[RMDB]
The record gives the reactivity of an RNA of 177 nucleotides to DMS and 2A3. Values are in units of 0.01, from 0 to 300, in steps of 10. Reactivities are given for positions 27 through 126. The DMS profile rests on 2,614 reads. DMS (dimethyl sulfate) methylates the pairing face of unpaired adenines and cytosines. The RNA was probed in 150 mM KOAc, 10 mM MgCl2 and 150 mM bicine (pH 8.5) at 24 C. DMS adducts were read by reverse transcription with MarathonRT. For 2A3, 1,110 sequencing reads were counted. The data come from the RNA Mapping Database (RMDB), library M2PK50.
RNA sequence: GGGAACGACUCGAGUAGAGUCGAAAACCCUCACUCUUCGGAGUGAGGGAAAUCUGAUUCCCAAUAGCUGGGUAUCCGGGCUAAGACGGAUAGGCGUUGCGAAAAGAUCUGGCUUCGGCCAGAUCAACUUAGAUAAGCGGUUCGCCGCUUAUCUAAGAAAAGAAACAACAACAACAAC
Reactivity to DMS in 0.01 (KOAc 150mM, MgCl2 10mM, bicine 150mM(pH8.5), 24C), signal-to-noise 3, nucleotides 027 to 126: c010c000c000u000c000a000c000u000c000u000u010c200g040g010a010g010u000g000a000g000g000g000a010a020a040u000c120u010g010a280u000u000c000c000c000a120a110u020a070g020c030u000g020g000g030u000a030u010c000c010g030g000g020c100u020a070a080g010a090c020g010g000a050u000a030g010g030c070g000u000u020g010c050g000a070a050a070a160g000a010u000c000u000g010g000c000u000u020c150g020g000c000c000a000g000a010u000c000a020a060
Reactivity to 2A3 in 0.01 (KOAc 150mM, MgCl2 10mM, bicine 150mM(pH8.5), 24C), signal-to-noise 1, nucleotides 027 to 126: c000c010c000u000c000a000c000u000c020u070u050c240g090g010a010g020u010g000a000g000g010g040a010a040a050u070c080u090g070a210u020u010c010c010c030a000a130u100a010g020c030u000g000g210g000u070a020u060c030c010g070g030g090c090u080a130a000g140a040c010g000g000a000u000a030g030g110c130g300u300u130g030c030g030a000a070a030a120g000a000u000c000u010g000g000c010u040u080c190g140g020c000c000a000g000a000u010c000a010a010